This 177-nucleotide RNA was probed chemically with DMS and 2A3.
For DMS, 43,587 sequencing reads were counted.
Values are in units of 0.01, from 0 to 300, in steps of 10.
Conditions: 150 mM KOAc, 10 mM MgCl2 and 150 mM bicine (pH 8.5), 24 C.
Source: RMDB library OK1LIB, as collected in RNAgym.
[RMDB]
RNA sequence: GGGAACGACUCGAGUAGAGUCGAAAAGGGAGGUUGACUCCCCGGCGCCAUUAGGCUUUUCCCCAACGAGGCGCUCCGGAGGGGGUUGCAUUAGAGACUUUGCGUUAGGUUAUUUUUUUUGAUAGUGCAGUGAUGAGAACUUCGGUUCUCAUUAUUGAAAAGAAACAACAACAACAAC
Reactivity to DMS in 0.01 (KOAc 150mM, MgCl2 10mM, bicine 150mM(pH8.5), 24C), signal-to-noise 9, nucleotides 027 to 126: g000g010g010a030g010g010u040u040g010a200c010u000c010c000c040c090g000g010c080g000c010c010a080u030u040a100g010g010c060u010u010u010u010c020c010c000c140a120a100c090g010a120g000g010c020g010c030u010c130c150g010g020a120g010g000g000g000g010u000u020g010c060a060u010u020a090g010a140g000a060c050u010u010u010g010c060g000u010u010a050g010g000u000u010a010u000u000u000u000u000u000u000u000g000a090u010a050g010u020g010
Reactivity to 2A3 in 0.01 (KOAc 150mM, MgCl2 10mM, bicine 150mM(pH8.5), 24C), signal-to-noise 8, nucleotides 027 to 126: g030g020g010a040g010g040u180u210g100a070c000u010c000c000c000c000g040g000c000g010c010c010a080u100u220a080g020g030c000u090u020u050u060c010c000c000c000a050a040c050g050a040g030g000c010g000c020u030c030c040g050g020a090g040g030g020g010g010u020u120g010c020a040u030u170a070g020a000g020a120c000u070u090u100g020c030g040u030u050a020g010g040u010u030a110u060u060u050u020u020u010u060u080g120a100u090a060g060u070g060